[RMDB]
RNA sequence: GGGAACGACUCGAGUAGAGUCGAAAAGCCGACUGCACGUGCGUGCGAGCAGUUUUCGAAAUCGCACGUUUCACGUAAAGACCCAACUCUACUCGAUGCGAGGGUCAGCAAGCAAGCAGCUAUAAAACAGUGCUGUAACAUUCGUGUUACAGCACUGAAAAGAAACAACAACAACAAC
Reactivity to 2A3 in 0.01 (KOAc 150mM, MgCl2 10mM, bicine 150mM(pH8.5), 24C), signal-to-noise 1, nucleotides 027 to 126: g020c020c020g070a060c030u060g010c000a000c010g020u020g000c000g040u010g010c000g020a050g030c070a040g000u020u060u160u300c090g080a040a040a110u040c000g000c000a000c000g000u000u020u020c040a010c000g010u020a030a050a050g030a020c010c000c020a010a010c020u020c000u040a000c010u010c010g000a000u040g000c040g020a060g030g040g000u030c000a020g020c020a010a000g050c000a020a020g060c010a000g000c000u050a070u060a260a060a000a010
Reactivity to DMS in 0.01 (KOAc 150mM, MgCl2 10mM, bicine 150mM(pH8.5), 24C), signal-to-noise 2, nucleotides 027 to 126: g030c060c060g020a120c000u010g010c120a030c030g030u000g000c000g030u000g010c000g020a030g000c130a090g030u000u000u010u030c120g020a050a070a160u010c010g000c000a000c000g010u000u010u000c000a030c050g040u030a060a130a090g000a070c020c050c000a140a060c010u000c000u000a000c000u000c010g020a030u000g000c050g000a120g000g000g000u000c010a070g030c080a080a070g010c070a030a040g000c060a050g000c050u000a060u000a060a050a060a170
An RNA of 177 nucleotides, treated with 2A3 and DMS and read out base by base. 2A3 adducts were read by reverse transcription with SuperScript II with manganese. High DMS reactivity at an A or C suggests that its Watson-Crick edge is free. Source: RMDB library M2PK90, as collected in RNAgym. The 2A3 profile rests on 1,822 reads. Values cover nucleotides 27 to 126.